[RMDB]
RNA sequence: GGGAACGACUCGAGUAGAGUCGAAAAGGAGUCAUAUUUUUUUCUGGCUUCCAUCUGUGGGCAUCUGCACUGAACUCUCGCAGAGGCAGGUUGUCUGAGGGUUGGCGGCUGGGAGAACUCAACCAGUGGGUGAUGCCUACUGUGUGCUGGGUGCCGAAGUCAUAACCGAAUUCGUUCGGUUAUGACUAAAAGAAACAACAACAACAAC
Reactivity to 2A3 in 0.01 (KOAc 150mM, MgCl2 10mM, bicine 150mM(pH8.5), 24C), signal-to-noise 3, nucleotides 027 to 156: g030g000a030g070u110c090a040u030a160u220u080u040u010u000u030u030c000u020g010g000c000u030u000c010c010a050u000c020u050g060u290g060g010g010c000a020u010c020u010g010c010a030c020u030g030a200a100c050u050c040u090c190g050c040a000g040a230g090g020c010a000g080g110u140u090g020u000c050u090g070a110g050g070g000u020u100g040g000c020g010g030c000u030g000g010g010a040g020a030a030c010u030c080a030a040c020c000a010g000u010g010g040g070u200g130a080u210g140c030c000u010a020c000u010g030u000g000u050g140c130u050g020g010g020u010g030c040c060g080a010
The data come from the RNA Mapping Database (RMDB), library OK3TST. Structure probing data (2A3) for a 207-nucleotide construct. For 2A3 the reverse transcriptase was SuperScript II with manganese. The 2A3 profile rests on 1,174 reads.